[RMDB]
RNA sequence: GGGAACGACUCGAGUAGAGUCGAAAAAUCGGCCCGUUCGCGGGCCGAUACAGGCGGAGGCUCGCACCUAGCGACCGGCGCAAGGACCCACGGUACUGCGAAUUGACUGUGGAUUCGUCCACAGUAAUUGGAAAGUAUCAUUCGUGAUACUUUCCAAAAAAGAAACAACAACAACAAC
Reactivity to 2A3 in 0.01 (KOAc 150mM, MgCl2 10mM, bicine 150mM(pH8.5), 24C), signal-to-noise 1, nucleotides 027 to 126: a000u010c000g000g000c000c040c000g070u020u010c160g010c020g070g030g060c020c010g000a000u010a000c020a010g110g000c010g040g160a020g010g000c120u000c050g000c000a060c030c210u020a050g000c000g030a030c000c010g060g180c030g000c030a030a080g040g010a100c000c020c000a010c030g090g030u120a130c070u100g070c030g020a080a080u100u140g090a000c020u000g000u010g010g020a000u020u040c180g070u000c010c000a020c000a000g000u020a010a080
Reactivity to DMS in 0.01 (KOAc 150mM, MgCl2 10mM, bicine 150mM(pH8.5), 24C), signal-to-noise 5, nucleotides 027 to 126: a050u000c000g020g030c000c010c010g020u000u000c140g020c010g040g020g030c000c000g000a000u000a010c110a090g000g010c020g000g000a170g010g010c200u000c030g020c020a120c160c140u010a130g000c010g000a060c020c010g030g000c030g020c020a060a070g000g010a160c030c000c030a090c140g000g000u000a060c110u010g000c050g000a080a070u010u020g000a030c000u000g000u000g000g000a030u000u010c220g000u000c000c000a010c000a000g010u000a020a080

Structure probing data (2A3 and DMS) for a 177-nucleotide construct. For DMS the reverse transcriptase was MarathonRT. The reactions ran in a buffer of 150 mM KOAc, 10 mM MgCl2 and 150 mM bicine (pH 8.5), at 24 C.